[RMDB]
RNA sequence: GGGAACGACUCGAGUAGAGUCGAAAAUCAAAUAACCAGCAAAUAGAAGACGAGGUAGAGCGCGCGCUCUACCAAAAGCUGGGUGUCUAAAGGCAAGUGUAGACGCCACUACACAAAUAAACAAAAAUACGUAUUCAAUGUUCGCAUUGAAUACGUAAAAAGAAACAACAACAACAAC
Reactivity to 2A3 in 0.01 (KOAc 150mM, MgCl2 10mM, bicine 150mM(pH8.5), 24C), signal-to-noise 1, nucleotides 027 to 126: u090c010a000a020a030u110a040a080c010c010a000g010c030a090a070a170u110a100g260a210a020g100a110c050g040a060g020g000u020a030g000a000g000c210g000c110g030c130g100c300u010c000u000a000c000c000a000a000a000a000g000c010u010g000g050g030u030g080u000c130u110a160a080a040g050g000c040a150a090g010u020g010u030a000g080a140c190g110c130c030a040c010u040a050c000a000c000a000a070a010u060a000a010a000c080a040a100a020a050a000
Reactivity to DMS in 0.01 (KOAc 150mM, MgCl2 10mM, bicine 150mM(pH8.5), 24C), signal-to-noise 1, nucleotides 027 to 126: u000c050a090a130a080u000a110a200c020c000a030g000c000a110a140a150u030a050g000a150a090g050a080c110g020a110g000g000u020a030g000a000g010c010g050c300g010c300g000c000u000c000u000a000c000c000a020a030a050a070g000c020u000g000g000g000u010g040u000c040u000a040a080a160g000g000c050a070a060g000u000g020u000a010g000a220c170g010c070c140a230c060u000a030c000a000c050a020a050a090u020a040a040a040c090a010a090a060a040a060